[RMDB]
RNA sequence: GGGAACGACUCGAGUAGAGUCGAAAAGCACCUCUGGCCAAUGAGACGCAGACUGAGAAAGGAUCCCUCUUAGGGAUUUCACCUCUUGCAGCUCCAAAUAUACUCUUGGAUAAUGGUGUGGCCUAAGGGAGUCGGAUACCUUCGGGUAUCCGAUUCCAAAAGAAACAACAACAACAAC
Reactivity to 2A3 in 0.01 (KOAc 150mM, MgCl2 10mM, bicine 150mM(pH8.5), 24C), signal-to-noise 9, nucleotides 027 to 126: g000c000a010c010c000u020c050u060g100g000c000c000a030a030u180g010a000g010a020c050g010c050a010g020a100c040u050g000a010g040a060a080a030g030g010a010u010c000c010c000u030c070u080u200a050g000g010g010a000u030u050u100c040a040c010c010u020c000u020u100g020c020a010g010c010u010c030c010a010a100a000u160a020u030a070c000u010c010u020u000g010g000a010u030a070a060u120g010g010u010g000u020g020g020c000c000u010a050a030g110
Reactivity to DMS in 0.01 (KOAc 150mM, MgCl2 10mM, bicine 150mM(pH8.5), 24C), signal-to-noise 7, nucleotides 027 to 126: g000c030a050c000c010u000c170u030g000g000c010c010a050a020u040g010a030g020a120c130g010c110a060g000a090c070u010g010a040g010a050a170a120g000g000a030u000c010c000c000u010c240u040u030a070g010g020g010a010u000u010u020c050a160c180c040u010c020u000u010g010c050a070g010c040u020c050c100a060a080a090u040a170u020a150c000u000c030u000u010g000g000a040u020a050a080u020g010g010u000g020u010g000g000c010c000u010a070a110g000